[RMDB]
RNA sequence: GGGAACGACUCGAGUAGAGUCGAAAAGUAAAGGCGGAGGAGGGUUUUGGCUUGCGCUCGGUCCGCCCGCGCGUGGUGUGGGCUGGAAUUCGUGUGUGGACGAUGAUUAAUGCCGCGCGCCCAGGAAGUAGCAAAUCUAAUUCGUUAGAUUUGCUACAAAAGAAACAACAACAACAAC
Reactivity to 2A3 in 0.01 (KOAc 150mM, MgCl2 10mM, bicine 150mM(pH8.5), 24C), signal-to-noise 5, nucleotides 027 to 126: g050u060a030a090a070g020g030c020g010g020a040g020g050a030g030g080g010u030u060u100u140g070g020c040u040u080g020c120g030c010u000c020g040g160u010c010c010g000c010c000c000g000c000g010c000g030u040g000g060u040g010u040g040g050g000c070u110g050g080a080a080u090u020c020g000u070g010u030g050u090g140g060a010c010g010a020u060g010a010u070u190a110a030u100g010c000c000g000c000g000c000g000c010c010c010a040g080g020a150a050
Reactivity to DMS in 0.01 (KOAc 150mM, MgCl2 10mM, bicine 150mM(pH8.5), 24C), signal-to-noise 7, nucleotides 027 to 126: g010u000a070a090a100g000g010c010g010g000a060g010g010a080g010g000g020u000u010u000u010g000g000c110u000u010g000c040g010c010u000c010g010g010u000c010c020g010c010c000c040g010c040g010c040g020u000g010g020u000g030u000g010g010g010c080u000g010g000a100a110u000u000c020g010u000g010u010g020u010g020g010a050c020g010a060u000g000a140u010u000a090a060u000g000c010c000g000c020g010c020g010c010c050c040a110g010g010a100a130
Structure probing data (2A3 and DMS) for a 177-nucleotide construct. For 2A3, 9,680 sequencing reads were counted. DMS adducts were read by reverse transcription with MarathonRT. Conditions: 150 mM KOAc, 10 mM MgCl2 and 150 mM bicine (pH 8.5), 24 C. High 2A3 reactivity points to a flexible backbone, as in loops and unpaired stretches.